[RMDB]
This 177-nucleotide RNA was probed chemically with DMS and 2A3.
The reactions ran in a buffer of 150 mM KOAc, 10 mM MgCl2 and 150 mM bicine (pH 8.5), at 24 C.
Values cover nucleotides 27 to 126.
It was measured as part of the RMDB libraries RFM100 and RFMREP.
As a SHAPE reagent, 2A3 marks flexible, mostly unpaired nucleotides at the ribose 2'-OH.
RNA sequence: GGGAACGACUCGAGUAGAGUCGAAAAAUUUCAUCUUUUCAUGUCAUAUAUCUCCUGCCUCUCACGGUUUCAUCUGUGAGAAGCUUCAAAGAACUGCAAUAGAAGUCUAGCUCGAGAUGCGUGUGCCUUCGCAACAGCAAUUCGUUGCUGUUGCGAAAAAAGAAACAACAACAACAAC
Reactivity to DMS in 0.01 (KOAc 150mM, MgCl2 10mM, bicine 150mM(pH8.5), 24C), signal-to-noise 1, nucleotides 027 to 126: a040u010u040u000c050a100u000c030u000u010u010u000c080a030u030g000u010c080a090u010a050u010a040u000c070u000c050c020u000g000c000c020u000c000u000c000a010c010g060g020u000u020u020c150a020u040c010u000g000u000g000a000g000a010a120g000c000u030u000c100a090a090a110g020a010a090c130u010g000c020a040a070u000a100g020a010a090g000u000c080u000a130g000c050u000c140g010a010g000a010u000g000c020g030u000g010u020g030c030c050
Reactivity to 2A3 in 0.01 (KOAc 150mM, MgCl2 10mM, bicine 150mM(pH8.5), 24C), signal-to-noise 3, nucleotides 027 to 126: a000u090u100u050c020a050u030c020u030u030u030u030c040a030u060g090u040c060a020u110a050u060a110u250c010u000c010c000u020g010c020c000u000c000u000c000a000c020g010g060u020u210u210c060a290u070c000u010g010u000g000a000g010a000a000g000c000u010u010c050a090a080a000g050a060a040c050u080g050c030a010a070u030a110g040a070a000g060u050c030u070a000g000c000u000c000g030a030g000a010u050g030c000g040u050g030u040g070c000c000